[RMDB]
RNA sequence: GGGAACGACUCGAGUAGAGUCGAAAACCAAUUCUCCAUUUACGGCAUCUUGUGCGAACCGAUCACGCACGAGAUGGUCCUUACGGGGUGUCCCAACAGUCGAGGGGCACGCAGGAUGCCUAGAAUAGACCACUAGGUAUCCUCAGUGCGCCAUGCACCAUGAAGCAGCGUUCGCGCUGCUUCAUGGAAAAGAAACAACAACAACAAC
Reactivity to 2A3 in 0.01 (KOAc 150mM, MgCl2 10mM, bicine 150mM(pH8.5), 24C), signal-to-noise 1, nucleotides 027 to 156: c040c000a030a090u230u060c000u030c010c050a150u030u000u300a090c100g030g000c000a000u020c000u000u000g000u000g010c010g110a250a090c060c040g070a130u090c150a000c080g010c000a000c010g000a000g000a000u010g070g000u040c000c000u020u070a050c030g000g000g040g050u010g030u030c020c000c000a020a000c040a050g150u150c030g080a130g020g000g010g010c000a000c000g000c000a000g000g000a000u000g000c000c000u000a040g010a120a090u110a080g090a190c050c030a010c080u000a000g000g000u000a000u000c030c000u000c010a060g000u010g020c040g120c000c000a060u180g030c030a060